Background: This 177-nucleotide RNA was probed chemically with 2A3 and DMS. 2A3 adducts were read by reverse transcription with SuperScript II with manganese. Source: RMDB library RFMREP, as collected in RNAgym. For 2A3, 1,344 sequencing reads were counted. Reactivities are given for positions 27 through 126.
RNA sequence: GGGAACGACUCGAGUAGAGUCGAAAACCCAGACACAUUCACACUGGGCCAAGAGCAGCUGCCAUUGCAGAUUCGAGUCACGUCCUUUUUUCCUUCCUUCUCCUUCUUGGAGUUACAACAGAAGCUGGCUUUCGUAUUAGUUCGCUAAUACGAAAGCAAAAGAAACAACAACAACAAC
Reactivity to 2A3 in 0.01 (KOAc 150mM, MgCl2 10mM, bicine 150mM(pH8.5), 24C), signal-to-noise 1, nucleotides 027 to 126: c000c010c010a000g060a020c060a000c010a070u130u130c060a060c000a010c100u000g040g040g000c030c050a100a000g040a010g030c060a000g000c010u020g000c040c020a150u110u120g000c000a000g040a120u060u040c000g030a000g020u020c000a040c070g070u040c010c000u000u030u010u020u030u090c040c000u040u010c040c000u040u080c010u000c000c000u050u230c030u030u100g020g000a000g000u040u060a120c100a140a010c020a060g050a050a010g030c090u120g080
Reactivity to DMS in 0.01 (KOAc 150mM, MgCl2 10mM, bicine 150mM(pH8.5), 24C), signal-to-noise 2, nucleotides 027 to 126: c000c010c000a160g010a110c110a120c100a090u000u000c100a070c080a100c060u000g000g000g000c030c040a060a110g000a100g050c040a110g000c060u010g010c020c020a100u020u000g040c070a080g000a090u000u000c050g000a060g000u000c000a070c220g010u000c030c000u000u000u020u000u020u000c030c030u000u030c020c050u000u020c020u000c030c000u000u030c120u000u000g000g010a030g000u030u020a100c150a070a050c110a080g010a070a090g020c140u000g010